[RMDB]
RNA sequence: GGGAACGACUCGAGUAGAGUCGAAAAUCGCGCUUCGGCGCGAACCGACCGUAGGGCUCUAAAUGACAAUGAUGCAUGGGAGAACGUACAUUCGAAAGAGUGUACGACCCAUGUUGAGUCAUGGAGCCCUAAACGGGUAUACCGAGUUCGCUCGGAAUUGAGGUGUAUUAUUCGUAAUACACCUCAAAAAAGAAACAACAACAACAAC
Reactivity to DMS in 0.01 (KOAc 150mM, MgCl2 10mM, bicine 150mM(pH8.5), 24C), signal-to-noise 3, nucleotides 027 to 156: u010c000g040c000g030c000u000u010c270g080g020c020g040c000g000a020a050c070c020g020a040c000c010g030u010a040g010g030g020c000u000c020u000a060a090a080u000g010a030c010a090a100u010g010a060u000g000c000a020u010g010g010g000a140g000a100a120c000g010u000a000c000a020u000u010c000g000a200a130a230g010a060g030u010g020u000a010c000g020a070c000c020c000a000u000g000u000u000g000a050g020u000c000a040u000g010g010a040g010c000c000c000u010a000a010a030c020g010g010g010u000a110u000a120c020c010g010a060g020u000u000c300g050c050u010c010g010g010a110a130
Reactivity to 2A3 in 0.01 (KOAc 150mM, MgCl2 10mM, bicine 150mM(pH8.5), 24C), signal-to-noise 2, nucleotides 027 to 156: u030c000g000c000g010c010u060u110c270g090g000c000g000c000g000a030a000c000c010g030a010c060c000g010u010a010g020g000g040c000u050c000u040a280a300a100u020g000a000c000a030a300u110g050a050u060g070c000a000u000g030g050g000a240g040a220a050c000g000u000a000c000a000u020u040c000g050a080a120a000g000a040g000u000g030u000a000c000g040a040c020c030c000a000u000g000u000u000g000a000g000u000c000a010u040g000g000a000g000c000c000c000u000a030a000a000c000g000g000g020u040a090u070a150c000c000g010a000g010u030u150c110g050c140u000c000g030g160a010a030